Structure probing data (DMS) for a 177-nucleotide construct.

[RMDB]
RNA sequence: GGGAACGACUCGAGUAGAGUCGAAAAGAAUAUAUUAUUCAGCCAUUGAAAGAAUGAAAUUGUGUCAUACGCAGCAACAUGGAUGGAAUUGGAGGUCAUUAUGUUAAAUGAAAUAAGCCAGGCACAGCAUAAACGGCGUUUUCGAACGCCGUUUAUGAAAAGAAACAACAACAACAAC
Reactivity to DMS in 0.01 (KOAc 150mM, MgCl2 10mM, bicine 150mM(pH8.5), 24C), signal-to-noise 1, nucleotides 027 to 126: g010a040a080u000a100u000a080u030u010a050u000u000c000a120g050c010c030a120u010u020g010a050a050a140g010a100a030u000g000a060a060a120u000u010g000u000g010u000c030a120u000a090c180g010c060a050g020c130a050a060c060a040u010g000g000a080u000g040g000a030a070u020u000g000g030a060g020g030u010c020a010u000u020a020u000g030u030u010a030a060a040u000g000a020a080a120u010a030a090g030c020c040a010g050g010c030a000c090a040g000
For DMS, 717 sequencing reads were counted. The RNA was probed in 150 mM KOAc, 10 mM MgCl2 and 150 mM bicine (pH 8.5) at 24 C. It was measured as part of the RMDB library OK2TST.